[RMDB]
RNA sequence: GGGAACGACUCGAGUAGAGUCGAAAAUAUAUCGUAUUGGCGAACUUAGCGAUGUGACGAUGUGAAUGAGUGCGGGAUGUACAGAAUAAGGUCAGUCGGAUAAUCACGGAAAUCAAUAUGAGAAGGAAUGCAUGGAUGGAUUCGUCCAUCCAUGCAUAAAAGAAACAACAACAACAAC
Reactivity to 2A3 in 0.01 (KOAc 150mM, MgCl2 10mM, bicine 150mM(pH8.5), 24C), signal-to-noise 2, nucleotides 027 to 126: u130a010u010a000u030c030g000u020a040u040u080g040g000c000g030a090a070c060u030u040a040g090c020g100a060u020g050u020g070a020c010g060a070u100g020u010g280a080a070u110g000a050g050u080g020c010g120g000g010a030u110g010u000a020c040a000g090a050a160u140a060a040g040g000u040c010a010g000u000c020g000g030a030u120a120a010u080c060a010c060g030g040a010a060a000u030c010a030a000u050a090u190g020a040g040a040a010g070g060a100
Reactivity to DMS in 0.01 (KOAc 150mM, MgCl2 10mM, bicine 150mM(pH8.5), 24C), signal-to-noise 2, nucleotides 027 to 126: u030a080u020a080u010c030g030u000a110u000u000g010g010c040g010a150a050c100u000u010a100g020c030g010a070u000g010u010g000a130c040g030a120u000g000u000g000a070a060u000g010a080g010u010g030c060g010g000g000a070u010g000u000a100c070a080g020a100a090u000a060a050g020g000u000c030a050g010u000c050g020g000a120u010a040a030u010c040a030c060g000g010a090a090a100u000c070a050a050u000a050u000g020a030g020a120a110g020g010a140
Source: RMDB library OK2TRN, as collected in RNAgym. This 177-nucleotide RNA was probed chemically with 2A3 and DMS. Reactivities are rounded to 0.1 and cut off at 0 and 3. The reactions ran in a buffer of 150 mM KOAc, 10 mM MgCl2 and 150 mM bicine (pH 8.5), at 24 C. For 2A3, 1,386 sequencing reads were counted. 2A3 adducts were read by reverse transcription with SuperScript II with manganese. DMS adducts were read by reverse transcription with MarathonRT.